[RMDB]
RNA sequence: GGGAACGACUCGAGUAGAGUCGAAAAGAGCGACUUAAUAUUAGAUCGUCGCGAUCUAAACAGUCCGACACGCUGUCGCGGGGCAGCACCUCCCGGGAAAGGGCCCUUGGUCCGGAUUCGAAAGAAAAUGGUCAUAUUUAUUCGUAAAUAUGACCAUAAAAGAAACAACAACAACAAC
Reactivity to DMS in 0.01 (KOAc 150mM, MgCl2 10mM, bicine 150mM(pH8.5), 24C), signal-to-noise 8, nucleotides 027 to 126: g010a160g010c110g010a030c010u000u000a100a150u010a190u000u000a020g000a010u000c020g010u010c250g020c110g020a010u000c010u000a020a050a240c220a050g000u000c010c020g010a090c130a110c160g010c010u010g000u000c020g010c210g000g010g000g000c020a010g020c030a190c110c050u000c020c000c010g010g000g000a040a110a150g000g000g000c020c020c200u000u000g030g020u000c010c020g010g010a280u000u010c030g000a080a090a130g000a040a060a110
Reactivity to 2A3 in 0.01 (KOAc 150mM, MgCl2 10mM, bicine 150mM(pH8.5), 24C), signal-to-noise 4, nucleotides 027 to 126: g080a040g020c070g010a010c020u090u180a150a060u150a290u290u050a030g000a040u010c020g190u140c120g050c140g160a010u000c010u010a000a030a050c020a040g010u000c030c030g020a030c020a010c140g020c020u030g000u030c020g050c120g250g020g030g000c010a010g020c000a020c000c020u020c000c000c000g000g000g000a060a090a030g000g000g030c000c000c030u040u180g010g010u020c010c000g010g000a050u130u080c050g050a040a080a100g080a020a090a040
The record gives the reactivity of an RNA of 177 nucleotides to DMS and 2A3. The RNA was probed in 150 mM KOAc, 10 mM MgCl2 and 150 mM bicine (pH 8.5) at 24 C. For 2A3 the reverse transcriptase was SuperScript II with manganese. It was measured as part of the RMDB library OK2TRN. High DMS reactivity at an A or C suggests that its Watson-Crick edge is free. Reactivities are given for positions 27 through 126.